[RMDB]
RNA sequence: GGGAACGACUCGAGUAGAGUCGAAAAACUUUUUAUCAGGUUUGAUCACUGAUUUUCUCCUAACGUUUAGAUUCAAACAAAUGACCAUAUACUAUCGAUACAGGAACUAACCACGGGCAUAUGCAGUAAAGGAUUUCAAACCCGCCCUUGAUUGAAAGCUACAAAGAAUAUUCGUAUUCUUUGUAGCAAAAGAAACAACAACAACAAC
Reactivity to DMS in 0.01 (KOAc 150mM, MgCl2 10mM, bicine 150mM(pH8.5), 24C), signal-to-noise 1, nucleotides 027 to 156: a150c040u030u010u000u000u000a050u030c010a040g010g000u000u020u000g010a070u010c050a170c020u000g010a070u000u000u000u010c030u020c010c080u010a060a180c090g030u000u010u000a100g000a120u010u000c090a010a090a070c070a010a090a070u000g000a130c140c010a040u020a040u000a010c050u010a050u000c010g000a140u000a070c180a080g020g010a120a070c070u000a090a080c000c020a040c020g000g010g020c030a060u010a040u000g000c060a110g000u000a040a070a130g000g000a120u020u000u010c020a060a090a090c000c000c090g010c070c000c000u010u000g010a130u010u040g010a040a090a150
Reactivity to 2A3 in 0.01 (KOAc 150mM, MgCl2 10mM, bicine 150mM(pH8.5), 24C), signal-to-noise 2, nucleotides 027 to 156: a000c040u200u010u030u130u130a070u020c020a040g030g040u030u080u100g030a070u040c020a010c080u000g020a030u030u030u100u010c070u000c030c060u050a100a030c000g010u030u100u030a050g000a120u140u100c050a030a090a000c040a010a080a170u190g050a050c010c000a030u050a000u080a270c040u050a030u150c020g080a030u010a140c030a030g040g050a010a030c010u020a040a030c040c030a020c100g000g010g020c060a020u090a000u150g030c020a040g020u030a030a150a040g050g000a050u030u090u060c040a050a070a090c000c040c010g000c000c000c050u060u030g070a050u050u050g000a000a070a070
An RNA of 207 nucleotides, treated with DMS and 2A3 and read out base by base. It was measured as part of the RMDB library OK3TST. Conditions: 150 mM KOAc, 10 mM MgCl2 and 150 mM bicine (pH 8.5), 24 C. For DMS the reverse transcriptase was MarathonRT.